[RMDB]
RNA sequence: GGGAACGACUCGAGUAGAGUCGAAAACAGUUAUGUGCGUCCCUCCGGAAGCUGCGCGCUCGGUCGAAGAGGACGACCAUCGCCGAUAGAGGACGACCGGUCUUCGGUCAAGGGAAUAAGAGUAAAAGAUAUUCGAACUUUUCGAAGUUCGAAUAUCAAAAGAAACAACAACAACAAC
Reactivity to DMS in 0.01 (KOAc 150mM, MgCl2 10mM, bicine 150mM(pH8.5), 24C), signal-to-noise 4, nucleotides 027 to 126: c070a070g000u000u010a040u010g010u000g010c050g010u010c010c010c010u000c030c030g010g010a150a070g020c030u000g010c140g000c070g000c050u000c100g030g000u000c010g020a080a070g000a140g010g000a080c040g020a050c040c010a090u010c050g010c040c030g010a110u010a100g000a130g000g020a060c070g010a070c060c050g010g010u000c080u000u000c020g020g000u000c020a080a070g000g010g010a080a070u020a050a080g010a080g010u000a030a090a100a110
Reactivity to 2A3 in 0.01 (KOAc 150mM, MgCl2 10mM, bicine 150mM(pH8.5), 24C), signal-to-noise 4, nucleotides 027 to 126: c030a010g050u170u140a110u140g090u070g020c030g000u040c010c010c000u000c020c020g050g020a120a030g020c020u030g030c060g000c030g030c160u020c050g050g000u050c050g040a070a020g070a100g050g030a010c000g020a030c000c030a040u070c030g000c010c000g010a030u090a140g110a040g020g030a060c050g030a020c020c010g060g070u100c080u140u150c050g000g010u020c030a020a060g080g010g020a070a070u150a110a040g070a020g100u140a000a050a000a100